This 207-nucleotide RNA was probed chemically with DMS and 2A3. Reactivities are given for positions 27 through 156. The RNA was probed in 150 mM KOAc, 10 mM MgCl2 and 150 mM bicine (pH 8.5) at 24 C. For 2A3, 2,356 sequencing reads were counted.

RNA sequence: GGGAACGACUCGAGUAGAGUCGAAAAGGGCGCAACGCAAGAGCGAACAGUUUGACGAGGCACGGGAGAACGCGGCCGGCGACUUACCUGAUAUGUGUCGCAGUUGCGGCGAGCGCGAACGUAUGACGGGGAGUAUGAAGUGCGAGGUGUGCGCCGAACGUACAGGACUAUUCGUAGUCCUGUACGUAAAAGAAACAACAACAACAAC
Reactivity to DMS in 0.01 (KOAc 150mM, MgCl2 10mM, bicine 150mM(pH8.5), 24C), signal-to-noise 2, nucleotides 027 to 156: g030g010g010c000g060c050a140a120c000g020c040a050a160g000a090g010c050g010a100a140c080a190g010u000u000u000g020a120c060g020a180g020g010c060a180c100g000g000g020a120g030a050a080c040g040c050g000g010c030c000g000g030c000g010a050c050u000u000a080c060c040u010g010a090u000a130u020g010u020g030u000c010g020c040a150g020u020u000g020c050g050g000c040g000a140g000c070g020c040g000a100a070c060g060u020a020u010g000a060c050g020g020g010g000a210g000u000a100u010g020a050a050g010u000g010c040g000a140g040g000u000g020u000g010c000g020c000c000g000a040
Reactivity to 2A3 in 0.01 (KOAc 150mM, MgCl2 10mM, bicine 150mM(pH8.5), 24C), signal-to-noise 3, nucleotides 027 to 156: g060g020g000c020g000c010a050a030c050g010c030a060a060g020a010g110c040g030a060a030c050a120g040u070u080u100g090a080c050g020a050g000g070c110a040c100g000g050g000a090g030a090a020c060g020c020g080g000c010c000g010g010c000g010a020c010u070u140a140c040c030u110g090a050u060a070u300g160u010g010u020c010g000c010a030g030u120u070g020c000g020g000c010g010a060g060c000g010c010g030a020a000c050g030u050a020u110g020a030c040g000g010g000g000a000g000u070a060u120g090a130a010g020u010g050c020g020a060g000g060u060g030u060g000c020g000c000c000g000a000